[RMDB]
Structure probing data (2A3 and DMS) for a 177-nucleotide construct. Reactivities are rounded to 0.1 and cut off at 0 and 3. It was measured as part of the RMDB library OK1LIB.

RNA sequence: GGGAACGACUCGAGUAGAGUCGAAAAAUAUCUUUUCUACGUUGAAUGUCUGGAUCUUUCCUUUGUAUGUUUGUGUCUCUGUGUGUGUAUGUGGCCAAGCGUCUGCAGGUGAGGGUGGCACAUGGAAAAACGGAUCUAACUUCGGUUAGAUCCGUUUAAAAGAAACAACAACAACAAC
Reactivity to 2A3 in 0.01 (KOAc 150mM, MgCl2 10mM, bicine 150mM(pH8.5), 24C), signal-to-noise 1, nucleotides 027 to 126: a000u280a020u000c150u000u020u030u020c000u040a090c000g090u040u010g120a110a050u060g020u050c020u000g070g100a130u000c000u040u060u110c010c000u000u010u120g130u050a240u060g090u030u060u070g040u060g130u010c010u000c000u020g040u000g000u040g010u020g050u110a060u280g030u140g010g000c040c000a030a000g000c000g050u030c060u080g070c000a000g000g010u200g090a060g050g000g000u030g030g000c000a000c030a030u000g000g000a100a150
Reactivity to DMS in 0.01 (KOAc 150mM, MgCl2 10mM, bicine 150mM(pH8.5), 24C), signal-to-noise 1, nucleotides 027 to 126: a120u030a050u020c010u000u010u010u000c010u010a110c150g010u000u000g010a090a130u040g000u000c040u010g000g010a070u000c010u000u000u020c020c020u000u030u010g000u050a070u010g010u020u010u010g000u010g000u000c010u010c030u010g030u000g000u000g000u000g000u020a040u010g010u010g000g000c030c060a080a060g000c120g010u020c080u020g030c020a080g000g000u020g020a090g040g000g010u000g000g010c100a010c180a040u040g010g060a030a040